[RMDB]
Record summary: Conditions: 150 mM KOAc, 10 mM MgCl2 and 150 mM bicine (pH 8.5), 24 C. An RNA of 207 nucleotides, treated with 2A3 and DMS and read out base by base.

RNA sequence: GGGAACGACUCGAGUAGAGUCGAAAAAAGCCUCUGUUCGAAAUCAUCGGGAGUGAUCCAGAUGACGGUCCUGCCAUGCGACCGCAACGAGAGCAUGUCGCAUCGAAUGGACUCGGGGAGUCGGCAGUGUAGUGGGGAUGGUUCGCCAUCCCCACAAGGACAUUAAAUGGUUCGCCAUUUAAUGUCCAAAAGAAACAACAACAACAAC
Reactivity to 2A3 in 0.01 (KOAc 150mM, MgCl2 10mM, bicine 150mM(pH8.5), 24C), signal-to-noise 3, nucleotides 027 to 156: a000a010g150c040c010u080c050u070g060u080u260c030g020a060a060a060u060c010a010u000c010g020g000g000a040g050u110g040a100u010c000c010a020g000a020u010g020a010c010g000g010u020c000c000u000g030c010c010a020u000g000c010g000a020c020c050g030c030a070a100c130g170a040g000a010g180c060a060u190g010u010c010g000c000a000u030c110g020a030a020u030g020g010a030c050u030c080g020g010g020g000a040g070u020c020g030g000c020a020g050u050g050u300a150g000u000g000g010g000g020a000u030g040g000u030u020c080g010c070c000a010u000c010c010c000c000a000c000a000a000
Reactivity to DMS in 0.01 (KOAc 150mM, MgCl2 10mM, bicine 150mM(pH8.5), 24C), signal-to-noise 1, nucleotides 027 to 156: a110a070g010c060c000u000c020u000g000u000u000c040g040a070a100a100u010c000a020u000c010g000g010g000a040g040u000g010a250u000c010c000a000g010a010u010g000a040c010g010g000u000c000c010u000g000c080c020a040u010g000c000g020a000c010c290g000c030a070a200c140g000a270g010a210g010c020a150u000g000u000c000g000c040a190u000c060g030a090a110u000g030g000a060c030u000c060g010g000g000g000a130g000u000c030g010g020c060a160g040u000g020u000a170g000u000g020g000g050g040a060u000g000g010u010u020c090g000c020c000a030u000c010c000c000c000a000c000a000a270

Reactivities are given for positions 27 through 156. For 2A3, 2,199 sequencing reads were counted. It was measured as part of the RMDB library M2RFPK.